RNA sequence: GGGAACGACUCGAGUAGAGUCGAAAACGGAGAAUGACGGGGUGGUUGUUCCUACCGAAUGACAGAACGCUGCAAAUGAGUUGAUCGCAAGACAGAUGAACCCGACACUGAAGUCGCGGCUGAGCAACGCUUUCCGGUCCCUCACGGCGUCCGACAACCCUCCUCAAGUAUUCGUACUUGAGGAGGGAAAAGAAACAACAACAACAAC
Reactivity to DMS in 0.01 (KOAc 150mM, MgCl2 10mM, bicine 150mM(pH8.5), 24C), signal-to-noise 1, nucleotides 027 to 156: c090g000g000a110g010a110a130u000g010a160c060g000g010g020g020u000g050g070u050u000g020u000u020c010c000u000a300c120c070g040a070a010u000g000a100c030a130g000a030a050c020g020c000u000g060c060a100a190a060u050g000a020g000u000u000g000a050u020c050g000c150a030a090g030a030c190a090g000a180u000g030a050a120c010c000c000g000a020c020a210c050u000g010a110a170g010u000c000g010c040g030g070c040u010g000a160g020c040a090a050c050g030c060u000u000u010c030c000g030g030u000c010c090c000u000c020a050c030g000g020c010g020u010c070c050g010a070c020a050a280
Reactivity to 2A3 in 0.01 (KOAc 150mM, MgCl2 10mM, bicine 150mM(pH8.5), 24C), signal-to-noise 3, nucleotides 027 to 156: c030g050g020a110g040a090a110u130g090a070c070g000g080g000g000u070g020g020u000u020g010u010u000c010c000u020a070c020c020g060a070a060u090g030a040c010a060g050a090a060c060g010c020u030g000c070a140a130a130u110g020a040g060u160u130g120a020u030c010g010c060a010a080g050a080c050a050g070a100u060g040a050a050c030c000c040g000a000c010a010c070u210g070a190a040g010u000c030g040c110g050g000c040u100g070a010g050c050a000a080c050g030c020u030u060u090c090c010g020g010u010c020c040c000u020c010a020c020g010g000c010g010u010c060c010g040a030c060a070a080